Source information:
Conditions: 150 mM KOAc, 10 mM MgCl2 and 150 mM bicine (pH 8.5), 24 C. Chemical mapping of a 207-nucleotide RNA with 2A3.

RNA sequence: GGGAACGACUCGAGUAGAGUCGAAAACUAGGACUGAAGGAAGUCUCCUGACUAGAGGACUUCUCUCAGUCUCGACUGAUCUCUCUCCUCUUCGAUCCUCUGAAGUCUCCUUCGACUUCGAUCGAGAUCCUUCGAGAAGAGUCAGGAGAUCUCCUAGUAGCCUAGAAGGUUUCGACCUUCUAGGCUAAAAAGAAACAACAACAACAAC
Reactivity to 2A3 in 0.01 (KOAc 150mM, MgCl2 10mM, bicine 150mM(pH8.5), 24C), signal-to-noise 1, nucleotides 027 to 156: c010u030a010g060g040a050c070u110g060a090a030g040g010a030a010g050u000c040u020c010c010u050g040a070c050u070a050g020a030g080g040a070c000u240u030c000u030c010u010c010a040g060u040c000u000c000g000a000c020u020g020a050u000c000u000c000u000c010u040c050c050u030c030u160u080c060g030a040u030c030c010u110c110u140g000a000a000g010u000c010u080c010c110u140u150c140g000a030c010u040u040c030g020a060u050c080g000a010g010a070u060c000c010u010u040c040g030a030g000a120a020g020a020g050u030c030a000g030g000a000g000a010u010c010u020c000c000u040a030g050
Source: RMDB library OK3TST, as collected in RNAgym.